[RMDB]
RNA sequence: GGGAACGACUCGAGUAGAGUCGAAAAGUGUAAACAAGCUCCAGAACUUUAGGGCCCAGUCAUCAGGAGAAAGGCCAAGUUUGAGCUAUGCACAGCUCAGUUUUGAUGACCGGAGAGUGAUGACAUGCGCCAGCAAUUAGUUCGCUAAUUGCUGGCGAAAAGAAACAACAACAACAAC
Reactivity to 2A3 in 0.01 (KOAc 150mM, MgCl2 10mM, bicine 150mM(pH8.5), 24C), signal-to-noise 2, nucleotides 027 to 126: g010u030g020u090a060a070a130c060a180a000g020c010u000c020c070a060g020a080a030c130u160u130u190a080g040g110g030c000c080c000a030g040u010c000a010u030c010a010g020g100a120g060a190a060a000g020g050c000c010a020a020g000u000u020u060g020a010g000c020u030a070u240g110c070a060c050a090g000c000u030c000a020g000u000u000u120u070g060a090u190g050a140c000c000g060g020a030g010a000g070u030g010a040u030g020a010c070a050u090g100
Reactivity to DMS in 0.01 (KOAc 150mM, MgCl2 10mM, bicine 150mM(pH8.5), 24C), signal-to-noise 2, nucleotides 027 to 126: g000u000g020u000a050a110a120c150a070a150g020c020u000c030c080a200g000a080a050c070u010u000u000a110g010g000g000c020c000c050a120g020u010c010a020u000c030a070g000g000a100g000a070a110a050g020g000c010c000a040a050g010u000u020u010g010a020g000c040u000a090u010g010c160a100c200a020g010c010u000c000a020g000u010u010u000u010g000a070u000g010a040c010c030g020g000a060g000a210g020u000g010a010u000g000a030c010a080u000g010